[RMDB]
RNA sequence: GGGAACGACUCGAGUAGAGUCGAAAAGUAACGCUCUUCGGAGCGUUACAAAAAGAUAUGGAUGCAUGCUGACAUGCUUAGGAGUCGGAAACGACUCCAUAAGCAACAGCAGCACGUGCAUCCUAAGUCAAAAAACGCAUCUCUUCGGAGAUGCGAAGCUAACAGGCUAGUUCGCUAGCCUGUUAGCAAAAGAAACAACAACAACAAC
Reactivity to 2A3 in 0.01 (KOAc 150mM, MgCl2 10mM, bicine 150mM(pH8.5), 24C), signal-to-noise 2, nucleotides 027 to 156: g000u010a010a000c010g000c000u020c040u050u150c300g140g000a000g000c000g000u000u000a000c010a000a000a000a000a000g010a000u010a000u010g000g000a000u000g000c000a000u000g000c000u010g030a060c040a200u300g000c000u030u000a010g000g000a000g000u000c000g030g000a000a000a000c000g000a000c000u010c000c000a000u010a000a000g000c010a020a050c060a070g060c000a010g000c030a010c070g000u010g010c000a000u010c000c000u000a010a000g000u000c040a000a030a030a150a000a070c020g000c000a000u030c000u020c000u020u170c300g090g000a000g000a020u000g010c000g010a000a000
The record gives the reactivity of an RNA of 207 nucleotides to 2A3. Conditions: 150 mM KOAc, 10 mM MgCl2 and 150 mM bicine (pH 8.5), 24 C.